[RMDB]
RNA sequence: GGGAACGACUCGAGUAGAGUCGAAAAUUAAACAUGGUUACCAUAAACUAAGGCACAAGGUAGCCAUGGUGCCUUAGUUAAAUAUAAAAGCUCAGCGUUAGGAAAAACCUAAUGCUCAGCAAAAAAAGAGCUAAUAUUGAUUCGUCAAUAUUAGCUCAAAAGAAACAACAACAACAAC
Reactivity to DMS in 0.01 (KOAc 150mM, MgCl2 10mM, bicine 150mM(pH8.5), 24C), signal-to-noise 2, nucleotides 027 to 126: u020u000a040a060a160c060a080u000g030g000u020u000a160c020c040a060u000a080a070a010c000u030a010a020g000g020c000a020c040a080a100g010g000u000a060g010c090c030a030u000g010g000u010g000c000c000u020u000a000g010u000u000a030a100a080u010a140u000a090a110a060a080g000c010u000c130a000g000c000g020u000u000a000g000g000a130a140a050a160a070c010c000u000a000a000u000g010c000u010c180a010g010c020a000a000a070a050a030a080a070
Reactivity to 2A3 in 0.01 (KOAc 150mM, MgCl2 10mM, bicine 150mM(pH8.5), 24C), signal-to-noise 2, nucleotides 027 to 126: u090u020a040a050a050c060a060u070g030g060u070u090a060c010c020a040u180a080a060a010c020u020a010a030g040g000c030a010c020a080a080g120g020u060a010g100c000c000a010u030g020g010u000g010c000c010u000u000a000g000u020u060a010a100a000u150a010u020a020a150a050a030g000c000u010c020a010g000c000g000u010u000a000g020g020a050a160a150a120a100c000c000u010a000a000u000g000c000u000c010a000g010c000a010a060a010a020a010a060a060